[RMDB]
RNA sequence: GGGAACGACUCGAGUAGAGUCGAAAAAGGUGGAGUCUCACUCUGUAGUCCACGCUGGAGUGCAGUGGCACAAUCUCUGCUCACUGCAACCUCCGCCACCUCAGUUCAAGUGAUUCUCCUGCUUCAGCCUCUCGAGUAGCUGGGACUAUGGGUGCAAGAUUACCAGGGUGUUCGCACCCUGGUAAUCAAAAGAAACAACAACAACAAC
Reactivity to 2A3 in 0.01 (KOAc 150mM, MgCl2 10mM, bicine 150mM(pH8.5), 24C), signal-to-noise 2, nucleotides 027 to 156: a000g140g030u080g000g000a060g010u010c010u100c040a020c020u090c040u040g060u120a030g060u090c090c050a080c070g020c120u160g000g030a050g020u170g000c000a010g000u010g000g000c030a020c060a150a260u120c180u040c050u160g030c050u090c010a000c000u000g030c000a000a180c000c000u000c000c020g000c000c020a010c000c000u000c020a010g000u120u120c130a120a010g000u020g050a070u060u000c020u000c000c030u110g110c010u080u070c040a040g000c000c000u000c030u000c010g020a020g010u020a030g000c040u120g000g000g050a010c010u100a190u130g010g000g020u030g030c040a110a090